[RMDB]
RNA sequence: GGGAACGACUCGAGUAGAGUCGAAAACGAGCAGUAUCCGGUAUGUUUUCGGGAGUGCGACAGACGACGCUAAUCAACACAAUUCUAAACCUCACGUACCACCACAUAGCAAUGAAGAAUUGCUACAACCUCUAAUGCAAUUCGUUGCAUUAGAGGUAAAAGAAACAACAACAACAAC
Reactivity to DMS in 0.01 (KOAc 150mM, MgCl2 10mM, bicine 150mM(pH8.5), 24C), signal-to-noise 6, nucleotides 027 to 126: c070g010a170g020c050a060g010u010a050u000c040c040g000g020u000a070u010g020u000u000u010u010c070g010g000g000a070g020u000g020c070g010a080c100a040g010a070c090g010a070c060g010c040u000a060a070u010c060a060a080c090a040c110a050a080u010u000c060u000a040a100a100c070c030u010c050a080c060g010u010a080c070c030a090c100c050a090c180a110u010a010g020c000a020a010u000g000a100a110g000a120a020u000u000g000c000u010a040c260a100
Reactivity to 2A3 in 0.01 (KOAc 150mM, MgCl2 10mM, bicine 150mM(pH8.5), 24C), signal-to-noise 6, nucleotides 027 to 126: c040g010a030g030c040a020g030u100a080u070c020c020g030g020u100a090u130g140u050u090u030u120c030g040g000g010a050g050u080g020c030g030a010c030a050g080a040c060g010a010c010g010c060u090a050a070u090c020a040a060c050a010c030a100a080u120u000c020u120a060a080a100c010c020u020c030a030c040g020u050a030c000c040a030c020c010a050c020a060u070a010g020c010a010a010u030g010a040a100g080a090a040u010u000g000c000u030a040c030a010
The record gives the reactivity of an RNA of 177 nucleotides to DMS and 2A3. Source: RMDB library OK2TRN, as collected in RNAgym. The RNA was probed in 150 mM KOAc, 10 mM MgCl2 and 150 mM bicine (pH 8.5) at 24 C. For 2A3, 9,711 sequencing reads were counted.